[RMDB]
RNA sequence: GGGAACGACUCGAGUAGAGUCGAAAAGAUAUGGAGUCCAUGUGCAAGCCGUGUGGGUCGGAAACGACCCACCGGUGAUGACCACAUAAGGACUCCUAAGUCAAACAUUAGACGUUCGCGUCUAAUGGGCGUAGAUAUUCUUCGGAAUAUCUACGCCAAAAGAAACAACAACAACAAC
Reactivity to 2A3 in 0.01 (KOAc 150mM, MgCl2 10mM, bicine 150mM(pH8.5), 24C), signal-to-noise 1, nucleotides 027 to 126: g010a020u060a040u160g000g000a010g000u000c020c000a030u050g000u020g000c100a130a160g000c030c040g220u190g000u000g300g020g000u000c000g020g070a070a070a020c000g010a030c000c020c000a000c010c000g000g000u000g000a010u010g030a020c070c020a010c010a020u160a240a300g010g020a000c000u000c000c000u000a010a000g030u000c020a160a060a000c010a010u010u010a010g010a010c010g000u050u060c300g010c020g110u050c000u010a000a000u030g110
Reactivity to DMS in 0.01 (KOAc 150mM, MgCl2 10mM, bicine 150mM(pH8.5), 24C), signal-to-noise 2, nucleotides 027 to 126: g000a040u010a300u000g010g010a060g060u000c000c050a100u000g040u010g000c030a130a210g010c010c000g010u040g060u000g010g040g000u000c000g030g010a150a060a230c000g000a000c010c000c000a000c010c010g010g010u000g010a020u000g000a210c300c000a010c000a010u010a150a120g010g010a000c000u000c000c000u000a000a120g010u000c010a180a130a190c000a000u000u000a010g010a030c030g020u000u010c300g010c000g030u000c000u000a000a000u000g020